[RMDB]
RNA sequence: GGGAACGACUCGAGUAGAGUCGAAAAGAACGCUAUGCUGAUUCUAUUAGCGUAUGGAAUCAGUCUCUACUUAUACGCUAAUGAGUAGAUUCAAGCUUAGCGUAGUUUGAAGACUCGCAUAGUGUUAGAUAGUUGUGUUAUUCGUGACGUAGCUAUCAAAAGAAACAACAACAACAAC
Reactivity to DMS in 0.01 (KOAc 150mM, MgCl2 10mM, bicine 150mM(pH8.5), 24C), signal-to-noise 9, nucleotides 027 to 126: g010a040a010c010g010c000u000a000u000g010c000u020g010a080u010u010c040u020a020u000u000a030g010c040g020u000a010u000g000g010a070a080u010c050a040g000u000c020u000c020u010a220c080u020u030a040u000a010c010g010c010u000a010a020u010g010a060g010u010a070g010a200u010u010c020a030a040g000c030u000u010a050g010c070g040u000a030g000u000u000u000g000a050a040g000a060c040u010c050g000c010a010u000a010g010u000g000u000u000a080
Reactivity to 2A3 in 0.01 (KOAc 150mM, MgCl2 10mM, bicine 150mM(pH8.5), 24C), signal-to-noise 9, nucleotides 027 to 126: g080a020a000c000g000c000u000a000u010g000c030u060g030a060u080u010c020u030a010u010u020a010g000c000g010u010a000u010g020g040a030a040u060c010a020g060u010c010u000c000u030a060c010u080u090a000u000a010c000g000c000u000a000a010u050g050a010g040u080a020g010a050u020u010c020a030a010g000c000u030u040a030g030c010g020u010a010g010u000u010u020g020a020a000g040a020c000u000c010g000c000a000u000a010g000u000g000u010u020a020